[RMDB]
RNA sequence: GGGAACGACUCGAGUAGAGUCGAAAAGGUGGACGUAUAUAGUUUACUUAAUCGUUUACUAUACGGUGGAGUACUAAUACUAUUUCACUGUCGUGCUCGCGGUUGAUCUUAGAUAAAUAUAUUUCUUAUCAGUAAUUUAGUUCGCUAAAUUACUGAUAAAAGAAACAACAACAACAAC
Reactivity to DMS in 0.01 (KOAc 150mM, MgCl2 10mM, bicine 150mM(pH8.5), 24C), signal-to-noise 2, nucleotides 027 to 126: g010g020u000g000g020a020c260g020u020a070u020a080u020a030g000u000u010u010a010c000u000u000a080a090u000c050g000u000u010u030a050c130u030a060u000a030c040g000g020u000g000g000a000g000u000a010c010u000a040a070u010a100c260u000a050u010u010u000c010a010c010u000g000u000c060g000u000g030c060u000c000g020c120g000g020u010u010g010a050u000c030u000u030a100g000a150u010a060a040a170u060a170u010a150u030u000u000c000u000u010
Reactivity to 2A3 in 0.01 (KOAc 150mM, MgCl2 10mM, bicine 150mM(pH8.5), 24C), signal-to-noise 5, nucleotides 027 to 126: g040g000u030g000g020a030c040g060u010a050u010a010u020a150g020u050u100u050a010c000u020u030a020a030u040c010g010u010u050u070a140c070u090a060u030a080c010g020g000u010g010g020a010g020u010a010c000u010a010a030u020a060c010u030a060u020u030u010c000a010c000u030g030u040c020g030u060g050c010u010c010g030c040g040g000u010u060g030a060u010c010u050u090a060g040a050u170a160a090a020u230a030u080a120u120u050u000c000u000u020